[RMDB]
RNA sequence: GGGAACGACUCGAGUAGAGUCGAAAAUGUACAUUAGUUCGCUAAUGUACAAAAAAACCUUUGUGUGUGAAGAGCUUUGAUCGUGUUUGCCCAUUGGGCAAGACACGGGAGCUCUUACACACUCUGGUAAAAACGUCAUUCUUUCGAGAAUGACGAAUACAACAUCAAUCUUCGGAUUGAUGUUGUAAAAAGAAACAACAACAACAAC
Reactivity to 2A3 in 0.01 (KOAc 150mM, MgCl2 10mM, bicine 150mM(pH8.5), 24C), signal-to-noise 3, nucleotides 027 to 156: u070g000u000a000c000a010u000u010a020g020u050u080c210g020c180u000a010a010u000g000u000a000c010a020a000a000a000a020a010a000c010c000u020u010u020g000u010g000u000g000u040g170a050a090g000a010g010c010u150u130u110g090a110u270c020g000u010g010u010u010u010g020c040c030c120a300u160u300g000g000g000c010a010a030g100a020c000a000c000g000g000g010a010g000c000u010c000u000u000a000c000a000c000a000c000u000c000u000g010g010u060a160a030a000a030a040c010g010u010c000a000u010u000c000u030u110u170c270g040a020g010a020a000u000g000a000c000g000a010a010
Reactivity to DMS in 0.01 (KOAc 150mM, MgCl2 10mM, bicine 150mM(pH8.5), 24C), signal-to-noise 1, nucleotides 027 to 156: u010g050u000a010c000a000u000u010a020g020u010u010c300g000c010u000a000a010u000g010u000a030c000a010a010a070a120a060a110a040c010c010u000u000u000g010u000g010u000g000u000g000a020a050g010a010g010c000u000u000u000g010a150u000c000g070u000g010u000u000u010g000c020c000c020a300u000u000g020g070g000c000a000a020g010a020c000a000c000g020g000g000a010g000c060u000c000u000u000a010c000a020c000a000c000u010c010u000g000g050u000a050a050a020a100a090c020g040u000c000a000u000u000c010u000u000u000c290g010a030g020a020a000u000g000a010c010g020a060a040

Description
This 207-nucleotide RNA was probed chemically with 2A3 and DMS. The data come from the RNA Mapping Database (RMDB), library RNAMAK. 2A3 adducts were read by reverse transcription with SuperScript II with manganese. The 2A3 profile rests on 2,742 reads. Reactivities are given for positions 27 through 156. DMS adducts were read by reverse transcription with MarathonRT.